[RMDB]
RNA sequence: GGGAACGACUCGAGUAGAGUCGAAAAUCCGACGAGCUGAACGCUUUCGAAGGAAAGCUUGACCAGCUAAUCUUCUGCAACGCCAUUACGAGGACUGCCCUUAGAGGCUCUUGGCGAUAGGUCACCCAAAACUAUUUGAGGUUCGCCUCAAAUAGAAUCGUGUACGUAAGUUCGCUUACGUACACGAAAAAGAAACAACAACAACAAC
Reactivity to DMS in 0.01 (KOAc 150mM, MgCl2 10mM, bicine 150mM(pH8.5), 24C), signal-to-noise 1, nucleotides 027 to 156: u000c050c050g010a120c020g000a050g000c050u010g000a010a160c140g000c000u000u010u000c020g030a270a130g050g000a040a040a040g020c000u000u020g050a180c240c040a140g000c000u000a090a090u020c040u010u010c040u000g000c080a050a100c060g020c010c030a160u010u020a100c050g000a120g000g010a040c030u010g020c010c000c070u000u000a110g000a190g010g030c010u000c030u000u000g030g020c000g000a110u000a030g050g000u000c010a070c010c010c000a080a070a110a210c000u000a000u000u000u000g040a010g020g040u000u000c300g020c000c000u000c000a000a020a000u000a030g010a040a120
Reactivity to 2A3 in 0.01 (KOAc 150mM, MgCl2 10mM, bicine 150mM(pH8.5), 24C), signal-to-noise 3, nucleotides 027 to 156: u060c010c000g010a050c050g020a010g000c030u040g040a150a010c080g000c010u030u090u060c030g050a070a030g150g020a060a050a010g000c000u060u070g060a050c000c020a000g000c010u020a060a120u080c090u180u040c050u100g030c040a090a060c030g020c010c000a060u150u120a080c090g050a050g110g050a100c090u080g030c020c020c010u050u140a080g030a140g070g000c010u010c000u020u030g010g000c000g060a080u070a050g020g000u040c020a040c030c020c000a030a120a020a030c000u000a000u000u000u000g000a000g020g020u050u110c230g080c020c000u000c000a000a000a000u000a000g000a000a050